[RMDB]
Overview
This 207-nucleotide RNA was probed chemically with 2A3. 2A3 adducts were read by reverse transcription with SuperScript II with manganese. The reactions ran in a buffer of 150 mM KOAc, 10 mM MgCl2 and 150 mM bicine (pH 8.5), at 24 C.

RNA sequence: GGGAACGACUCGAGUAGAGUCGAAAACAGGACAAGUGUUCAUUUAAAAUGACAAAUGGUACAGAGCACUAGUUUAAGAUGCUUUAUCCAUGUUGAUUGAAUUCAUAUUCAGAAGUCAACAAUGUGCUUGGUGAUAUUUGGGGUUAUUUCCCACAGACCGUAAAGUGCAGUUCGCUGCACUUUACGGAAAAGAAACAACAACAACAAC
Reactivity to 2A3 in 0.01 (KOAc 150mM, MgCl2 10mM, bicine 150mM(pH8.5), 24C), signal-to-noise 2, nucleotides 027 to 156: c020a040g000g150a040c020a030a060g020u040g100u020u060c010a000u030u100u270a130a270a130a150u090g000a000c030a020a090a010u040g000g020u110a030c040a100g020a000g010c010a000c060u030a070g040u020u180u130a090a030g050a110u040g010c050u130u010u060a040u180c040c020a040u080g020u020u020g050a080u040u050g010a010a060u160u160c070a060u190a080u210u010c000a030g040a150a020g140u050c000a000a000c000a000a060u080g030u050g040c000u050u060g030g030u030g040a030u050a090u070u090u030g020g000g000g000u040u110a070u150u070u040c020c000c000a010c000a010g100a020